An RNA of 207 nucleotides, treated with 2A3 and DMS and read out base by base. The data come from the RNA Mapping Database (RMDB), library OK3TST. For 2A3 the reverse transcriptase was SuperScript II with manganese. Conditions: 150 mM KOAc, 10 mM MgCl2 and 150 mM bicine (pH 8.5), 24 C.
[RMDB]
RNA sequence: GGGAACGACUCGAGUAGAGUCGAAAAAUCUUCGGUAGGCAACCGUCGCUGCACAAGUACAACGUCAUCUCUUCUUCGGUGCGACGCACUCUGGAGGACACGAUAAAGAUCCCGCCAGGGAUCGCUAACUCGCAGAACGCGGACUUUGACGGCGAUGAACGAGAUAAGAAUUCGUUCUUAUCUCGUUAAAAGAAACAACAACAACAAC
Reactivity to 2A3 in 0.01 (KOAc 150mM, MgCl2 10mM, bicine 150mM(pH8.5), 24C), signal-to-noise 5, nucleotides 027 to 156: a000u070c050u070u070c040g040g000u060a070g070g030c080a040a050c040c030g020u000c020g010c010u030g010c020a060c020a080a040g040u110a060c040a120a050c060g120u100c040a100u030c040u010c000u220u030c020u110u100c110g020g010u030g030c050g080a080c080g020c010a020c030u060c030u030g020g010a010g030g000a020c010a010c140g050a040u110a170a130a010g020a000u010c000c000c000g110c140c060a100g000g010g000a010u000c000g000c000u030a040a020c010u020c040g070c040a020g000a110a020c070g000c020g020g020a020c010u040u020u070g030a050c000g000g000c000g030a020u050g020
Reactivity to DMS in 0.01 (KOAc 150mM, MgCl2 10mM, bicine 150mM(pH8.5), 24C), signal-to-noise 3, nucleotides 027 to 156: a070u000c020u000u000c060g020g010u000a070g030g000c050a120a080c070c010g000u010c030g030c010u010g060c050a150c120a050a070g010u000a150c010a130a020c030g010u000c030a060u000c030u000c020u000u000c070u000u020c040g000g050u010g020c000g000a140c110g020c010a040c010u000c000u040g030g010a060g020g000a080c090a060c030g010a080u010a110a060a120g000a040u000c000c000c010g010c180c210a190g030g010g000a020u010c010g010c060u010a070a140c160u000c000g000c010a090g000a050a030c040g000c040g010g010a050c010u000u000u010g040a090c010g020g010c020g020a090u000g010